[RMDB]
RNA sequence: GGGAACGACUCGAGUAGAGUCGAAAACGGAGCCGAUCUUCGCCACCGUCGCGCCGGGGGUGGCGGCCGCCCCGCGCACCCCGGGCCGAGACGGUGAGGUCGCGCCAUCGGAACAAGGCUAUUUGCAGUGCUAAACACGUUUCGACGUGUUUAGCACAAAAGAAACAACAACAACAAC
Reactivity to 2A3 in 0.01 (KOAc 150mM, MgCl2 10mM, bicine 150mM(pH8.5), 24C), signal-to-noise 1, nucleotides 027 to 126: c010g080g030a020g020c040c000g020a060u040c010u170u140c140g180c150c010a010c010c010g030u020c010g000c000g030c050c000g020g010g000g000g010u060g080g080c050g000g040c120c040g120c020c030c020c000g000c030g280c000a010c000c000c000c000g050g000g000c050c040g000a040g000a020c010g030g000u000g000a000g000g000u010c010g020c080g000c060c010a220u110c060g000g010a030a050c020a070a130g090g000c030u110a230u110u190u220g050c100a060
Reactivity to DMS in 0.01 (KOAc 150mM, MgCl2 10mM, bicine 150mM(pH8.5), 24C), signal-to-noise 1, nucleotides 027 to 126: c090g010g000a140g000c020c000g010a000u000c030u000u000c150g060c180c010a080c010c030g000u000c000g000c080g010c000c020g000g000g010g010g040u000g030g000c010g020g010c100c220g010c140c180c000c020g000c020g020c020a040c000c010c000c000g000g010g010c050c010g010a020g000a010c010g030g010u010g010a010g000g030u000c000g020c220g010c030c070a090u010c000g010g010a100a100c120a130a180g030g010c060u010a130u000u000u000g010c150a110
This 177-nucleotide RNA was probed chemically with 2A3 and DMS. Source: RMDB library OK2TRN, as collected in RNAgym. The reactions ran in a buffer of 150 mM KOAc, 10 mM MgCl2 and 150 mM bicine (pH 8.5), at 24 C. The DMS profile rests on 1,152 reads. DMS adducts were read by reverse transcription with MarathonRT.